[RMDB]
RNA sequence: GGGAACGACUCGAGUAGAGUCGAAAAGAUAUGGACCCUGAACUACUCGUUUGGUUCUCCGAAGAACCCUGCUUAAUCGGAAACGAUUAAGCAGGGGGAGGAGGACCAUCGAGCAGGGUCCUAAGUCGUACUAUUUUAUGUUCGCAUAAAAUAGUACAAAAGAAACAACAACAACAAC
Reactivity to DMS in 0.01 (KOAc 150mM, MgCl2 10mM, bicine 150mM(pH8.5), 24C), signal-to-noise 5, nucleotides 027 to 126: g000a100u010a300u010g020g010a020c000c000c000u000g000a090a050c070u020a300c010u000c000g010u000u000u000g020g010u000u000c000u010c000c010g000a130a170g000a190a270c000c000c000u000g010c000u000u000a010a010u010c010g000g000a120a110a190c010g000a030u000u000a000a010g010c000a010g020g000g000g010g010a040g010g010a030g010g010a000c000c000a000u000c010g000a010g000c010a010g010g020g000u000c000c000u000a010a080g010u010c090
Reactivity to 2A3 in 0.01 (KOAc 150mM, MgCl2 10mM, bicine 150mM(pH8.5), 24C), signal-to-noise 4, nucleotides 027 to 126: g080a050u140a070u210g000g010a000c010c010c000u000g010a060a030c050u200a060c010u300c040g250u120u100u090g010g000u010u010c000u000c010c000g130a300a110g020a120a050c000c000c000u010g000c000u010u000a010a010u010c000g040g030a110a060a050c020g010a000u000u010a000a000g000c000a000g000g000g000g000g000a050g000g000a000g000g000a000c000c010a000u000c000g030a000g010c000a000g010g010g000u000c000c000u000a000a000g000u030c060
About this RNA: An RNA of 177 nucleotides, treated with DMS and 2A3 and read out base by base. The data come from the RNA Mapping Database (RMDB), library TTRINS. Conditions: 150 mM KOAc, 10 mM MgCl2 and 150 mM bicine (pH 8.5), 24 C. For DMS, 8,621 sequencing reads were counted.